RNA sequence: GGGAACGACUCGAGUAGAGUCGAAAAGUCGUCGAAUUGUGAACCUAGCGAACGCCGUGGAUGACCGCGAUGCUGUUCCGUUUGGUCAACUAAAGACCAUGAACCAGAACUCAUGGCAAGCACGUAAUGAAGCCUUACAGUUCCGUAAUGAGGCUGACACGCACUACCAGUUCGCUGGUAGUGCGUGAAAAGAAACAACAACAACAAC
Reactivity to 2A3 in 0.01 (KOAc 150mM, MgCl2 10mM, bicine 150mM(pH8.5), 24C), signal-to-noise 3, nucleotides 027 to 156: g070u010c040g030u040c070g040a110a250u070u140g040u050g030a090a070c000c010u000a000g010c000g020a000a000c000g010c030c000g010u010g040g000a190u250g140a260c060c000g010c000g010a050u170g030c060u170g040u000u050c090c010g000u000u000u010g020g000u020c040a050a010c020u100a070a000a050g050a040c010c000a010u010g000a020a020c100c030a110g040a120a080c010u000c000a000u000g000g000c010a020a020g040c080a040c090g100u050a050a060u130g120a060a010g000c000c000u030u100a090c010a100g020u020u060c040c030g070u190a080a030u160g020a020g040g030c000u000g010a010
Reactivity to DMS in 0.01 (KOAc 150mM, MgCl2 10mM, bicine 150mM(pH8.5), 24C), signal-to-noise 1, nucleotides 027 to 156: g050u000c040g000u000c030g000a110a160u020u000g020u020g080a020a040c030c000u010a090g010c000g020a090a060c000g050c030c020g080u000g000g000a140u010g000a200c020c030g020c010g020a140u000g020c050u040g010u000u000c080c060g030u000u000u000g070g000u000c060a070a140c010u020a130a200a200g000a030c000c010a050u030g020a080a130c040c060a150g000a080a150c140u000c000a040u010g000g040c000a030a040g060c080a010c080g000u010a070a140u000g000a030a150g020c060c010u030u000a080c080a120g060u000u010c050c070g000u050a060a090u020g000a040g000g000c000u000g030a160